[RMDB]
RNA sequence: GGGAACGACUCGAGUAGAGUCGAAAAGAUAUGGAUGCACGAAGAGGGAGCAUGGGUACGAAGAACUUAAUCGGAAACGAUUAAGGGAGUAUGGCCCAUGCGAAGAACUCUUCGUGCAUCCUAAGUCCAUUUACCUACACUUCGGUGUAGGUAAAUGAAAAGAAACAACAACAACAAC
Reactivity to DMS in 0.01 (KOAc 150mM, MgCl2 10mM, bicine 150mM(pH8.5), 24C), signal-to-noise 3, nucleotides 027 to 126: g020a070u000a300u010g010g010a010u000g000c000a010c000g000a010a010g010a030g010g000g020a100g010c010a000u000g000g010g000u000a110c030g050a110a300g020a100a210c000u000u000a000a000u000c010g000g000a100a100a230c020g000a020u000u000a010a010g010g000g020a120g020u000a130u000g000g000c000c000c020a010u010g020c020g000a060a120g000a120a170c010u000c000u000u000c000g010u000g000c010a000u000c000c000u010a020a060g000u000c030
Reactivity to 2A3 in 0.01 (KOAc 150mM, MgCl2 10mM, bicine 150mM(pH8.5), 24C), signal-to-noise 1, nucleotides 027 to 126: g060a000u110a010u140g020g010a000u000g040c000a000c000g000a000a030g010a000g090g060g060a120g000c010a010u030g000g000g000u140a300c060g050a080a060g010a080a020c000u000u010a000a000u010c010g010g000a030a020a050c010g000a000u000u000a010a020g020g000g030a040g030u120a130u240g000g000c030c020c020a000u010g000c000g000a020a010g010a010a000c000u000c000u020u020c000g010u000g000c010a000u000c000c000u000a010a000g020u050c000
An RNA of 177 nucleotides, treated with DMS and 2A3 and read out base by base. The RNA was probed in 150 mM KOAc, 10 mM MgCl2 and 150 mM bicine (pH 8.5) at 24 C. The 2A3 profile rests on 3,797 reads.